The record gives the reactivity of an RNA of 207 nucleotides to DMS and 2A3.
The RNA was probed in 150 mM KOAc, 10 mM MgCl2 and 150 mM bicine (pH 8.5) at 24 C.
For 2A3, 1,261 sequencing reads were counted.
The data come from the RNA Mapping Database (RMDB), library OK3TST.
As a SHAPE reagent, 2A3 marks flexible, mostly unpaired nucleotides at the ribose 2'-OH.
For DMS, 3,196 sequencing reads were counted.
[RMDB]
RNA sequence: GGGAACGACUCGAGUAGAGUCGAAAACUAAUGAAAGAACUCGGACUGGAUGGGGAGUGAGACUUGAAUGAGUGGACCGCCUGAAGGGCUUCCUGAUUGGAUUACCGUUAGGUAGAGGAUAAUCACAUGGGCGUUAAGGCAUUAAAGGCCGAGUUCCCUCUCUGUAAUCAUUCGUGAUUACAGAGAGAAAAGAAACAACAACAACAAC
Reactivity to DMS in 0.01 (KOAc 150mM, MgCl2 10mM, bicine 150mM(pH8.5), 24C), signal-to-noise 2, nucleotides 027 to 156: c020u010a100a110u000g010a140a080a100g000a000a020c020u000c030g030g010a070c010u000g000g000a120u010g000g020g020g020a080g040u000g020a170g000a070c040u000u020g030a100a080u000g000a130g000u010g020g010a130c040c040g060c010c010u000g020a060a070g000g000g020c040u000u000c030c000u010g010a150u000u000g030g010a110u010u010a010c040c000g000u000u020a080g000g010u010a140g010a160g030g020a100u000a030a060u000c040a050c080a090u000g020g020g000c110g000u000u000a090a080g000g020c000a120u010u000a040a080a070g000g010c010c000g010a070g000u010u000c030c090
Reactivity to 2A3 in 0.01 (KOAc 150mM, MgCl2 10mM, bicine 150mM(pH8.5), 24C), signal-to-noise 2, nucleotides 027 to 156: c000u040a030a090u150g120a080a040a170g010a010a010c010u020c040g020g060a030c020u010g020g030a070u040g030g020g000g000a060g030u080g020a040g010a020c030u040u040g120a080a060u140g020a020g040u060g000g020a050c030c030g030c020c010u020g050a050a040g050g060g000c040u100u040c010c020u080g050a160u040u220g020g000a010u020u080a080c020c020g050u060u000a050g020g060u060a070g010a060g110g020a040u090a090a030u080c010a020c030a130u120g010g010g000c020g000u070u080a050a020g010g000c010a010u050u220a060a110a020g020g000c000c010g000a020g000u000u000c020c000